The record gives the reactivity of an RNA of 177 nucleotides to DMS and 2A3. It was measured as part of the RMDB library OK2TRN. Conditions: 150 mM KOAc, 10 mM MgCl2 and 150 mM bicine (pH 8.5), 24 C. For 2A3, 691 sequencing reads were counted.
[RMDB]
RNA sequence: GGGAACGACUCGAGUAGAGUCGAAAACGGUUACUUUAUAUAAAUUGAACCUAAUAUCUGUCCAGGAUGGAAGAGGGUAUGCUCAGGUCCUUCCAGUAAUUCAUUCUUCUGAAUCAUGUGGCUGGACGCUCGUGUUAUGAUUCGUCAUAACACGAGCAAAAGAAACAACAACAACAAC
Reactivity to DMS in 0.01 (KOAc 150mM, MgCl2 10mM, bicine 150mM(pH8.5), 24C), signal-to-noise 1, nucleotides 027 to 126: c240g010g000u000u000a030c040u000u020u010a070u030a260u030a090a100a080u020u000g000a050a040c010c010u010a080a050u010a110u000c030u000g010u000c020c000a020g010g000a170u010g010g020a060a060g030a080g000g010g030u000a030u010g000c020u000c140a070g000g010u000c090c090u000u000c020c030a030g010u000a020a060u000u000c020a090u010u000c080u000u000c150u020g020a000a030u000c040a060u010g000u000g020g020c030u010g030g000a080c160
Reactivity to 2A3 in 0.01 (KOAc 150mM, MgCl2 10mM, bicine 150mM(pH8.5), 24C), signal-to-noise 1, nucleotides 027 to 126: c000g000g050u080u070a190c020u270u220u000a300u090a080u130a120a300a110u060u040g000a020a000c000c000u040a160a060u090a120u160c070u070g020u000c000c000a040g110g050a070u120g000g040a060a000g000a090g080g000g030u100a020u080g000c060u120c090a040g150g040u070c010c000u040u050c000c000a050g000u100a010a080u110u000c010a070u030u060c040u110u000c100u100g020a000a060u070c030a050u220g070u040g090g090c000u000g000g020a000c010